[RMDB]
RNA sequence: GGGAACGACUCGAGUAGAGUCGAAAAGUGCGUCACGUCUAACGGCUACCGUGGAGCUUGCCGCCAGUCCAGGCAGACUCGAAUGCCGCACGGUGCUUGGGAAUAAGAUCUUCCGCACAUCGAUAACGAGCAGUAGCAGUUUCGACUGCUACUGCUCAAAAGAAACAACAACAACAAC
Reactivity to 2A3 in 0.01 (KOAc 150mM, MgCl2 10mM, bicine 150mM(pH8.5), 24C), signal-to-noise 1, nucleotides 027 to 126: g030u020g000c010g040u030c020a040c070g040u000c020u030a080a020c060g000g000c010u040a020c030c020g030u060g110g020a040g040c010u010u020g000c050c010g070c000c030a070g000u070c050c030a000g000g020c000a000g030a120c010u000c020g060a150a140u170g030c010c000g050c040a020c020g000g000u010g010c010u130u220g090g000g000a150a110u090a200a030g010a040u000c030u110u020c040c000g030c000a050c000a080u100c070g080a030u010a100a040c090
Reactivity to DMS in 0.01 (KOAc 150mM, MgCl2 10mM, bicine 150mM(pH8.5), 24C), signal-to-noise 2, nucleotides 027 to 126: g010u000g000c020g020u000c090a020c300g000u040c030u000a120a200c110g000g000c010u010a050c060c050g000u010g000g000a020g010c010u020u000g000c000c000g000c050c040a130g000u000c030c030a190g020g010c010a000g000a030c050u000c010g020a110a070u030g000c040c050g000c030a020c010g020g000u000g000c010u010u030g070g010g000a090a110u000a110a100g000a070u000c100u020u000c170c000g040c030a030c020a050u000c050g020a090u000a100a150c200